About this RNA
Chemical mapping of a 177-nucleotide RNA with 2A3 and DMS. The RNA was probed in 150 mM KOAc, 10 mM MgCl2 and 150 mM bicine (pH 8.5) at 24 C. DMS adducts were read by reverse transcription with MarathonRT. The 2A3 profile rests on 2,446 reads.
RNA sequence: GGGAACGACUCGAGUAGAGUCGAAAAAAGGCUUAGGCAACUUUGCCAUUCGGAACGAUCCAACGCUUCAUCAUCAAGUUGCAUUUCGGGAGGAGCGGACCACUUGCCUUUCUGAAGAGAUCGCAUCGGCAAUAGAUAGGUUCGCCUAUCUAUUGCCAAAAGAAACAACAACAACAAC
Reactivity to 2A3 in 0.01 (KOAc 150mM, MgCl2 10mM, bicine 150mM(pH8.5), 24C), signal-to-noise 2, nucleotides 027 to 126: a000a000g030g000c020u040u020a030g000g000c010a040a090c040u120u080u060g010c010c020a090u030u120c080g070g050a070a050c020g020a070u000c070c030a070a070c050g010c050u100u010c040a150u010c000a020u040c040a090a070g030u040u030g040c030a040u090u060u100c080g010g020g010a010g000g020a110g030c000g030g000a060c050c010a090c100u040u160g000c010c030u050u070u000c050u040g040a050a010g080a010g010a120u050c050g010c030a080u150c070
Reactivity to DMS in 0.01 (KOAc 150mM, MgCl2 10mM, bicine 150mM(pH8.5), 24C), signal-to-noise 3, nucleotides 027 to 126: a030a080g010g000c020u000u000a030g010g010c160a070a090c030u000u000u010g030c010c000a170u010u010c040g030g010a030a100c090g040a060u000c050c060a120a160c080g010c060u010u000c040a110u010c090a110u020c160a040a110g010u000u000g000c060a130u010u000u000c110g020g010g000a060g000g010a100g000c020g010g010a090c090c080a070c090u000u010g010c010c010u000u000u000c020u000g000a020a060g020a130g020a030u000c060g010c110a130u000c140